About this RNA
An RNA of 177 nucleotides, treated with 2A3 and read out base by base. The reactions ran in a buffer of 150 mM KOAc, 10 mM MgCl2 and 150 mM bicine (pH 8.5), at 24 C.

RNA sequence: GGGAACGACUCGAGUAGAGUCGAAAACAAAAGAAAAAUUGAUAUUAAUAGGUAUGCCAGGUAGUGGAAAAACUACAAUUGGUAAACUUUUGGCCAAAGAAUAUAAUUGUAGUUUCUGUGAUAUGGAGGUCAGUAUACCAUUCGUGGUAUACUGACCAAAAGAAACAACAACAACAAC
Reactivity to 2A3 in 0.01 (KOAc 150mM, MgCl2 10mM, bicine 150mM(pH8.5), 24C), signal-to-noise 1, nucleotides 027 to 126: c060a000a100a040a060g120a030a130a030a010a030u230u190g030a000u000a180u300u000a190a120u050a240g140g000u150a130u190g000c000c000a000g010g020u060a000g050u060g170g140a060a110a030a060a000c020u020a000c050a000a150u080u050g000g000u000a040a050a050c020u050u000u050u260g000g060c040c030a000a180a000g050a000a000u100a000u000a160a220u000u040g020u000a160g000u000u000u030c100u000g100u030g080a130u000a120u300g150g000a020